The record gives the reactivity of an RNA of 177 nucleotides to 2A3 and DMS. The RNA was probed in 150 mM KOAc, 10 mM MgCl2 and 150 mM bicine (pH 8.5) at 24 C. DMS adducts were read by reverse transcription with MarathonRT.
[RMDB]
RNA sequence: GGGAACGACUCGAGUAGAGUCGAAAACGCAAUAGUGAGGGGAUUUUUAGGUGCUGGCUAAUAUCGCCUAUUUUUUCUUAUUGUUACGUGUACGUAGCCAAUACGUAAAUAACGCAACAAUACAACAUAAGAAGCAAAAUUUCGAUUUUGCUUCUUAAAAAGAAACAACAACAACAAC
Reactivity to 2A3 in 0.01 (KOAc 150mM, MgCl2 10mM, bicine 150mM(pH8.5), 24C), signal-to-noise 9, nucleotides 027 to 126: c040g010c030a070a120u080a150g100u090g070a050g010g030g020g030a030u090u030u020u050u160a020g040g000u050g090c070u060g100g030c030u070a080a060u070a080u180c040g060c020c010u020a120u040u090u010u000u020u020c040u030u040a010u000u010g000u010u000a010c000g010u010g020u020a010c000g000u000a010g070c070c030a120a100u020a020c000g010u020a030a100a120u150a060a010c010g000c010a010a000c000a000a010u030a070c080a100a010c010a100
Reactivity to DMS in 0.01 (KOAc 150mM, MgCl2 10mM, bicine 150mM(pH8.5), 24C), signal-to-noise 9, nucleotides 027 to 126: c080g000c130a070a080u030a060g000u010g010a050g010g000g000g000a070u010u010u010u010u000a040g010g020u010g020c070u000g000g000c070u010a040a070u010a060u010c070g010c020c020u000a000u000u010u000u010u010u010c040u010u000a010u000u000g000u000u000a040c000g010u000g010u010a010c010g010u000a010g010c220c220a070a150u000a010c010g000u000a010a060a120u030a090a010c010g020c050a000a010c000a000a010u000a030c300a040a070c190a110